This 177-nucleotide RNA was probed chemically with 2A3. The 2A3 profile rests on 641 reads. Source: RMDB library OK1LIB, as collected in RNAgym. The RNA was probed in 150 mM KOAc, 10 mM MgCl2 and 150 mM bicine (pH 8.5) at 24 C.
RNA sequence: GGGAACGACUCGAGUAGAGUCGAAAAGGAACGAGAAGGAAGAACAGUGCACCGAGAACACACAACGACUGUUGCCACCAGCAGGAGCCACGGCGGGUGCUUCUGCCACGCGUCAGCACUCUCCGAGGGACGUCAUCCCUUUCGAGGGAUGACGUCCAAAAGAAACAACAACAACAAC
Reactivity to 2A3 in 0.01 (KOAc 150mM, MgCl2 10mM, bicine 150mM(pH8.5), 24C), signal-to-noise 2, nucleotides 027 to 126: g020g000a000a000c050g000a030g110a100a080g070g050a010a060g010a070a000c000a000g180u150g170c040a030c000c100g010a020g100a130a030c090a000c050a000c010a270a100c020g070a020c020u040g000u100u090g020c010c010a000c000c000a000g030c000a120g030g020a070g080c000c000a030c060g000g050c000g100g050g000u090g010c000u070u020c010u020g050c030c000a010c140g030c000g000u070c000a010g070c030a000c000u050c000u010c000c030g050a100g000